[RMDB]
RNA sequence: GGGAACGACUCGAGUAGAGUCGAAAAUUUACGGGCCCGGGAGGAGGACCGAAUACACGCGCCCGAGGUCCUCCAGGUAGUACGAACGCGCGCGUGAAUAAUAGUACUACCACCCGGGCCCACCGAAUCACCAAAACAAUUUCGAUUGUUUUGGUGAAAAAGAAACAACAACAACAAC
Reactivity to DMS in 0.01 (KOAc 150mM, MgCl2 10mM, bicine 150mM(pH8.5), 24C), signal-to-noise 2, nucleotides 027 to 126: u000u010u000a110c040g000g040g030c000c000c030g010g010g010a260g000g020a010g020g020a010c000c000g000a110a140u000a090c180a070c070g010c100g000c010c070c080g000a120g000g040u010c000c000u010c000c010a060g000g000u020a000g000u000a010c000g010a150a160c120g010c070g000c050g020c050g020u020g000a220a120u000a050a090u010a140g010u000a000c000u000a010c000c010a300c000c000c010g010g000g000c000c000c000a000c000c050g020a150a150
Reactivity to 2A3 in 0.01 (KOAc 150mM, MgCl2 10mM, bicine 150mM(pH8.5), 24C), signal-to-noise 2, nucleotides 027 to 126: u020u020u120a080c060g000g000g000c040c010c010g050g000g000a190g020g000a000g020g000a000c030c030g080a070a040u220a080c130a010c050g140c000g060c030c030c010g010a030g020g000u020c000c000u010c000c000a010g000g000u000a000g000u030a000c040g010a190a020c050g000c000g000c000g000c050g030u040g020a030a000u190a080a040u060a030g020u000a000c010u000a000c000c000a010c000c000c000g000g010g030c000c000c000a000c000c000g000a010a030